[RMDB]
Chemical mapping of a 207-nucleotide RNA with 2A3.
For 2A3, 981 sequencing reads were counted.
2A3 adducts were read by reverse transcription with SuperScript II with manganese.
Source: RMDB library M2RFPK, as collected in RNAgym.

RNA sequence: GGGAACGACUCGAGUAGAGUCGAAAAAGCCUGUCUACGGACCGGCAAAACGUUCAUCUCGUUUUACGGGCCGCAUUAAGAUUGAAGCCAAGGAACGGGGACUUCAGACUACGACUACGGUCGUAGAUUACGCCUCCGAGUUUCGACUCGGAGGCAAGAUCCGAUAAGUGUUCGCACUUAUCGGAUCAAAAGAAACAACAACAACAAC
Reactivity to 2A3 in 0.01 (KOAc 150mM, MgCl2 10mM, bicine 150mM(pH8.5), 24C), signal-to-noise 2, nucleotides 027 to 156: a000g040c010c000u040g040u040c030u110a050c130g020g010a000c000c000g020g040c050a000a030a030a000c050g020u160u090c070a240u070c130u040c030g000u010u000u020u070a020c020g000g000g030c010c030g020c020a060u190u090a100a050g040a160u040u080g040a080a010g010c000c030a080a140g110g020a060a070c080g000g020g050g120a100c030u080u040c050a090g010a100c000u000a000c010g000a000c000u050a010c200g140g010u000c020g000u000a010g000a000u060u060a050c100g010c020c000u040c010c000g020a000g010u090u110u080c190g040a020c000u000c010g000g000a010g000g030c000a000a000